[RMDB]
RNA sequence: GGGAACGACUCGAGUAGAGUCGAAAAGACAACCACUCCGCGAAAGGCUGCAAGAAGUCUCUUGGAAUAGAGCACGAAACAGGGUGAUAGUCCCGUACUGCAGGCGAGUAUCGGACGCGUCAGCUCCGUUAUAGGUAUCGUUCGCGAUACCUAUAACAAAAGAAACAACAACAACAAC
Reactivity to 2A3 in 0.01 (KOAc 150mM, MgCl2 10mM, bicine 150mM(pH8.5), 24C), signal-to-noise 4, nucleotides 027 to 126: g010a010c010a040a030c040c030a040c040u020c000c010g020c010g030a010a020a030g120g040c010u000g000c010a010a000g000a010a000g050u030c000u010c000u010u010g000g000a010a010u010a000g020a000g010c010a000c010g030a020a040a010c030a020g000g010g000u010g010a000u010a010g000u010c020c010c000g000u000a000c000u000g000c000a000g020g050c000g000a000g000u000a000u020c010g010g020a010c050g020c030g050u040c020a040g030c040u040c030c040
Reactivity to DMS in 0.01 (KOAc 150mM, MgCl2 10mM, bicine 150mM(pH8.5), 24C), signal-to-noise 7, nucleotides 027 to 126: g000a060c060a100a150c110c070a150c200u000c010c000g010c010g010a150a150a220g000g000c010u010g010c020a020a030g010a020a010g000u010c010u000c000u000u000g000g050a300a050u000a020g000a010g010c010a020c000g030a240a070a040c020a180g010g010g000u000g010a160u010a070g010u000c000c000c000g010u000a210c030u000g000c010a010g000g000c010g010a080g010u000a060u000c090g000g000a020c070g010c110g000u000c060a080g000c060u000c040c120